Chemical mapping of a 177-nucleotide RNA with DMS and 2A3. For DMS the reverse transcriptase was MarathonRT. In probing experiments dimethyl sulfate is read out at A N1 and C N3, which are open when not base-paired. 2A3 adducts were read by reverse transcription with SuperScript II with manganese. The DMS profile rests on 2,359 reads.
RNA sequence: GGGAACGACUCGAGUAGAGUCGAAAAGAUAUGGAUAUCGAGGAUCUACCAGGAACCAACAGCUCGGAAACGAGACAUGGUUCCAGGUAGGGAGAUAUCCUAAGUCAAACGAGGGUUCGCCCUCGAAUCUGUUGACAAAGUUCGCUUUGUCAACAGAAAAAGAAACAACAACAACAAC
Reactivity to DMS in 0.01 (KOAc 150mM, MgCl2 10mM, bicine 150mM(pH8.5), 24C), signal-to-noise 3, nucleotides 027 to 126: g000a060u000a300u000g010g010a010u000a010u000c000g000a080g000g000a050u010c000u000a010c000c000a060g010g000a020a010c010c000a020a090c230a200g000c000u000c000g010g010a080a070a190c000g000a010g000a050c020a140u000g000g000u000u010c000c010a020g020g000u000a010g000g000g010a010g010a020u000a000u000c000c010u000a020a050g010u000c020a050a110a210c030g000a010g010g020g030u000u010c270g000c000c000c010u000c000g000a060a080
Reactivity to 2A3 in 0.01 (KOAc 150mM, MgCl2 10mM, bicine 150mM(pH8.5), 24C), signal-to-noise 2, nucleotides 027 to 126: g030a000u100a030u150g000g000a000u010a000u020c020g030a300g020g070a000u000c000u000a000c010c000a050g000g010a000a010c010c010a020a080c050a180g030c020u020c010g040g000a040a030a040c010g010a000g040a040c040a110u090g000g010u000u000c000c010a000g010g010u000a000g000g000g010a010g010a000u000a000u010c010c000u000a110a040g060u010c060a100a070a080c020g000a000g040g010g020u090u110c270g220c030c010c010u020c000g010a010a080